[RMDB]
RNA sequence: GGGAACGACUCGAGUAGAGUCGAAAAGGAUCGGGCGAUGUUAUUAUUUUGACUCGCUCGGCACCUUACGAGAAAUCAAAGUCUUUGGGUUCUGGGGGGAGUAUGGUCGCAAGGCUGAAACUUAAAGACGGUGUAUAAGAUUCGUCUUAUACACCGUAAAAGAAACAACAACAACAAC
Reactivity to 2A3 in 0.01 (KOAc 150mM, MgCl2 10mM, bicine 150mM(pH8.5), 24C), signal-to-noise 9, nucleotides 027 to 126: g020g000a040u010c000g010g000g000c010g010a050u210g080u030u010a080u080u060a210u060u300u080u130g010a000c000u000c000g000c000u000c000g000g000c010a290c000c000u020u030a050c050g030a020g090a130a090a040u160c090a070a090a040g070u020c020u070u100u090g050g000g000u130u070c050u060g010g010g000g010g020g000a020g040u090a070u180g050g010u020c030g000c060a020a030g020g000c010u010g030a090a040a030c020u050u060a050a040a020g090
Reactivity to DMS in 0.01 (KOAc 150mM, MgCl2 10mM, bicine 150mM(pH8.5), 24C), signal-to-noise 9, nucleotides 027 to 126: g010g000a300u000c010g010g000g000c000g010a020u040g020u010u010a040u020u030a180u020u030u020u010g000a010c010u000c000g010c000u000c000g010g010c120a030c010c000u000u010a090c140g000a080g000a090a080a080u010c100a070a090a130g000u010c030u000u010u010g010g000g010u010u000c060u000g010g000g010g000g000g000a060g010u010a050u010g010g010u010c030g000c160a070a110g010g010c030u000g000a080a080a060c050u000u010a070a070a100g000